The data come from the RNA Mapping Database (RMDB), library OK1LIB. Structure probing data (DMS and 2A3) for a 177-nucleotide construct. For 2A3 the reverse transcriptase was SuperScript II with manganese.
[RMDB]
RNA sequence: GGGAACGACUCGAGUAGAGUCGAAAAUCGCCCGCUACCUGCGCAUCAUGGUGGAUCCGUCCGGCAAUAUCGGCCAGCGGGCGUCCCCCUCCGCCCCAACGUCGGGCGAUGAUGUCGGCCGCGAUCGACCUACGAAGGGGUUCGCCCCUUCGUAGGUAAAAGAAACAACAACAACAAC
Reactivity to DMS in 0.01 (KOAc 150mM, MgCl2 10mM, bicine 150mM(pH8.5), 24C), signal-to-noise 1, nucleotides 027 to 126: u060c040g000c010c000c000g040c070u000a050c000c000u010g000c160g030c140a100u040c090a070u030g020g030u030g000g010a000u000c000c040g000u010c040c000g020g000c010a010a100u040a080u000c080g000g030c040c000a080g000c040g000g000g010c000g010u000c020c000c000c000c000u030c120c000g000c000c000c000c100a090a200c230g000u110c160g000g000g000c010g030a000u000g020a040u000g000u000c040g010g000c020c000g030c170g020a040u000c040g000
Reactivity to 2A3 in 0.01 (KOAc 150mM, MgCl2 10mM, bicine 150mM(pH8.5), 24C), signal-to-noise 4, nucleotides 027 to 126: u090c010g080c000c000c000g000c010u060a060c000c010u060g050c050g000c050a080u070c040a080u210g070g060u050g050g030a020u010c030c030g050u010c010c000g020g000c000a030a100u060a050u250c080g100g040c040c010a020g000c060g000g000g010c000g000u030c000c000c000c000c000u070c030c010g050c000c000c000c010a080a120c090g140u130c080g060g000g030c010g000a000u040g010a020u010g030u020c000g000g040c020c010g050c040g010a000u000c040g050
The 2A3 profile rests on 3,207 reads.